[RMDB]
RNA sequence: GGGAACGACUCGAGUAGAGUCGAAAACAAGGUUUGGCACCUCGAUGUCGGCUCAUCGCAUCCUGGGGCUGGAGCAGGUCCCAAGGGUACGGCUGUUCGCCGUUUAAAGCGGUACGCGAGCUGGGUUCCGAUGCAACCCUUUCGAGGGUUGCAUCGGAAAAGAAACAACAACAACAAC
Reactivity to 2A3 in 0.01 (KOAc 150mM, MgCl2 10mM, bicine 150mM(pH8.5), 24C), signal-to-noise 1, nucleotides 027 to 126: c050a040a150g000g080u040u100u080g070g000c000a020c020c010u000c010g130a160u170g040u120c020g000g050c000u000c020a100u140c000g000c040a080u010c000c020u010g000g000g000g000c040u040g040g030a150g070c150a000g000g000u000c000c000c000a030a210g000g020g000u020a010c010g000g000c000u030g170u230u240c140g000c000c000g000u000u000u100a010a050a000g000c000g040g000u010a000c100g020c010g060a000g000c000u030g010g090g070u000u000